[RMDB]
Conditions: 150 mM KOAc, 10 mM MgCl2 and 150 mM bicine (pH 8.5), 24 C. An RNA of 177 nucleotides, treated with 2A3 and DMS and read out base by base.
RNA sequence: GGGAACGACUCGAGUAGAGUCGAAAAUAUUGGUAACCUGCGUAUGUACACAUAUCCUUGCAGGUGUGAUUAUGCAUCCAAUCAGAGGUUUCCUCUUGCUCCAUGUGUGUAGAUGCCGAAGACGCUGCGGCACGUCAGUAUUCGUACUGACGUGCCGAAAAGAAACAACAACAACAAC
Reactivity to 2A3 in 0.01 (KOAc 150mM, MgCl2 10mM, bicine 150mM(pH8.5), 24C), signal-to-noise 2, nucleotides 027 to 126: u140a030u000u270g140g000u030a000a000c050c000u000g000c010g070u130a000u010g190u130a010c060a000c010a000u040a020u030c040c020u030u250g070c080a010g000g000u000g010u010g010a020u070u140a080u160g030c060a060u040c010c000a000a040u070c010a000g170a000g110g010u000u040u080c000c010u010c040u020u030g100c010u100c060c010a030u020g030u080g000u030g040u130a010g010a030u100g000c030c010g000a190a080g010a020c000g020c050u080g000
Reactivity to DMS in 0.01 (KOAc 150mM, MgCl2 10mM, bicine 150mM(pH8.5), 24C), signal-to-noise 1, nucleotides 027 to 126: u000a030u020u000g000g000u010a010a030c000c000u000g000c020g090u000a000u070g000u030a110c160a090c090a090u000a070u080c120c070u030u010g000c040a000g020g050u000g000u000g010a150u050u020a060u050g060c060a040u060c050c050a080a010u060c170a040g000a040g000g020u000u060u000c060c000u010c030u030u050g030c060u000c030c060a110u010g000u000g060u030g000u000a050g000a070u000g000c020c060g000a050a000g040a100c020g000c040u030g010
Annotation: Values cover nucleotides 27 to 126.